[RMDB]
RNA sequence: GGGAACGACUCGAGUAGAGUCGAAAAGACUUUGAUAAAUAGAGAUAUGUAUGACUGAGUCUCAGGGCAUCAAAGUAUAAGGAAGGGCCCUGUAUCCUCACUCAUACUUGAUACAAUAGCCUUCCUAGAUUGUUGUGUAUUUCGAUACAUAGCAAUCAAAAGAAACAACAACAACAAC
Reactivity to DMS in 0.01 (KOAc 150mM, MgCl2 10mM, bicine 150mM(pH8.5), 24C), signal-to-noise 9, nucleotides 027 to 126: g000a080c020u000u010u010g000a070u020a070a070a090u010a130g000a300g000a180u010a020u030g010u000a030u010g010a090c130u000g010a030g010u020c160u010c010a030g010g000g010c020a050u010c030a060a060a100g000u030a080u040a070a070g000g000a070a060g000g000g000c010c000c010u000g000u010a040u010c100c030u000c030a030c150u020c100a030u020a010c020u000u020g010a080u010a040c060a030a030u020a070g010c020c020u000u000c000c010u000a090
Reactivity to 2A3 in 0.01 (KOAc 150mM, MgCl2 10mM, bicine 150mM(pH8.5), 24C), signal-to-noise 9, nucleotides 027 to 126: g020a010c020u030u030u050g050a050u120a170a160a050u170a090g080a010g030a050u060a030u240g040u030a040u080g060a060c050u030g010a010g020u000c000u000c040a000g000g000g000c010a050u020c040a100a060a060g110u100a130u100a200a040g080g030a020a060g020g030g010c000c000c000u000g000u010a010u020c010c010u010c010a020c010u070c020a010u040a070c000u010u030g030a020u030a050c020a040a050u060a080g030c000c010u000u000c000c000u010a040